[RMDB]
RNA sequence: GGGAACGACUCGAGUAGAGUCGAAAAACGGACGUGUAAUAGGAAGGCGCGUGACGCUGAUAGUAUUGAACUCCUGACUCCAUCCAACUGUCGUGAACGCGUCACCACGUGGUAUGGAUAACCUGGAGACAGAAGCAGAAUUCGUUCUGCUUCUGUCAAAAGAAACAACAACAACAAC
Reactivity to DMS in 0.01 (KOAc 150mM, MgCl2 10mM, bicine 150mM(pH8.5), 24C), signal-to-noise 3, nucleotides 027 to 126: a080c100g000g010a030c030g020u000g020u000a130a060u010a080g010g000a150a100g000g010c030g010c090g000u010g000a090c070g000c020u030g010a040u020a070g000u010a050u010u010g000a070a110c070u000c060c000u000g020a120c060u010c010c050a030u010c010c020a120a060c020u000g010u000c020g060u010g030a230a130c060g000c080g000u020c010a170c080c000a020c030g070u000g000g020u020a050u000g000g000a060u010a060a100c090c010u000g000g010a300
Reactivity to 2A3 in 0.01 (KOAc 150mM, MgCl2 10mM, bicine 150mM(pH8.5), 24C), signal-to-noise 6, nucleotides 027 to 126: a000c040g030g020a010c070g020u040g030u060a070a180u080a200g140g060a130a070g030g010c010g000c020g070u050g040a100c020g000c030u090g060a100u060a050g080u070a100u080u120g070a040a010c010u040c010c020u040g050a070c030u000c030c030a030u020c020c010a010a040c020u070g040u150c010g000u020g030a050a010c040g000c020g060u010c020a010c010c000a010c020g010u030g010g000u110a140u130g030g030a030u030a090a060c000c010u000g020g000a020
Chemical mapping of a 177-nucleotide RNA with DMS and 2A3. The RNA was probed in 150 mM KOAc, 10 mM MgCl2 and 150 mM bicine (pH 8.5) at 24 C. The data come from the RNA Mapping Database (RMDB), library OK1LIB.